Annotation: Structure probing data (2A3 and DMS) for a 170-nucleotide construct.
RNA sequence: GGGAACGACUCGAGUAGAGUCGAAAAGCGAGUGGAUGUUCCUCCCCCCGAAGGUCCCGAGUGAGGCUUAUCCCGGGGAUCGGCCUCUGUCCCUCCAUGGUGAGCUCCAGGACCCCCAAAAGGAGGGUUAACGCCCACUUCGGUGGGCGUAAAAGAAACAACAACAACAAC
Reactivity to 2A3 in 0.01 (KOAc 150mM, MgCl2 10mM, bicine 150mM(pH8.5), 24C), signal-to-noise 2, nucleotides 027 to 129: g030c060g000a040g000u090g010g210a210u190g050u050u000c000c000u030c000c020c030c000c000c000g020a010a050g030g020u020c000c000c000g020a030g030u020g020a040g040g000c000u000u040a070u070c010c040c030g000g000g030g040a010u010c020g020g020c030c030u030c000u080g020u030c000c000c000u000c000c000a010u030g000g000u030g000a030g000c000u000c010c000a000g050g000a000c000c020c000c000c010a000a070a060a150g050g020a040g010g010g010u060u030a090
Reactivity to DMS in 0.01 (KOAc 150mM, MgCl2 10mM, bicine 150mM(pH8.5), 24C), signal-to-noise 2, nucleotides 027 to 129: g000c060g000a100g040u040g000g060a120u020g040u040u000c030c000u010c000c000c000c000c000c000g010a110a120g030g000u020c010c020c050g060a100g060u040g020a120g040g000c030u000u000a070u010c000c000c030g000g050g020g030a070u000c060g000g000c010c030u020c000u010g000u000c000c030c030u020c000c000a120u000g010g000u000g020a120g030c090u050c000c010a090g050g020a100c050c020c020c000c000a030a000a090a090g020g000a060g000g000g030u050u000a060

For 2A3 the reverse transcriptase was SuperScript II with manganese.
Reactivities are given for positions 27 through 129.